The data come from the RNA Mapping Database (RMDB), library OK3TST. Structure probing data (2A3 and DMS) for a 207-nucleotide construct. The RNA was probed in 150 mM KOAc, 10 mM MgCl2 and 150 mM bicine (pH 8.5) at 24 C. The 2A3 profile rests on 1,013 reads.

RNA sequence: GGGAACGACUCGAGUAGAGUCGAAAAAUAGGGAAACGCCACACUGAGAGGACUUAGGAAUUCCUACCAGCCGACUGACUCCCAAUUGCUCCGACUGUAGCAACGCAUUGUGAGCUAUUUAUGAAUGUAUUCCUAAGAUGAGCUUUGAAAGAAGUGAACGUACUCAGCUAUUCGUAGCUGAGUACGUAAAAGAAACAACAACAACAAC
Reactivity to 2A3 in 0.01 (KOAc 150mM, MgCl2 10mM, bicine 150mM(pH8.5), 24C), signal-to-noise 2, nucleotides 027 to 156: a000u060a010g020g000g020a030a090a000c030g010c060c000a030c020a010c040u030g080a080g000a060g140g040a010c050u120u070a040g050g000a020a030u110u040c000c000u030a090c000c050a000g020c020c020g050a070c070u070g000a050c000u000c000c000c000a000a050u030u070g000c000u010c010c060g080a100c090u030g030u090a000g070c070a040a050c060g010c040a060u020u070g050u060g110a010g020c020u010a050u050u080u000a110u130g110a070a010u110g000u090a020u030u090c000c010u000a020a040g030a060u130g000a000g000c000u050u030u110g050a050a090a020g050a010a030g020u050g110a020
Reactivity to DMS in 0.01 (KOAc 150mM, MgCl2 10mM, bicine 150mM(pH8.5), 24C), signal-to-noise 1, nucleotides 027 to 156: a160u000a160g030g000g010a050a040a060c060g030c020c030a090c020a080c030u010g000a150g000a060g020g020a080c030u000u010a140g030g050a000a130u000u010c010c050u010a060c030c000a080g030c050c020g000a160c040u010g020a060c090u010c030c030c010a100a080u000u000g000c000u000c010c000g000a200c040u010g020u000a000g010c040a050a020c050g010c090a100u000u000g020u000g000a160g010c010u000a050u000u000u000a070u000g030a040a070u080g020u000a060u000u000c010c030u000a060a130g020a110u030g000a180g010c020u010u000u040g010a070a090a100g010a060a050g000u000g000a080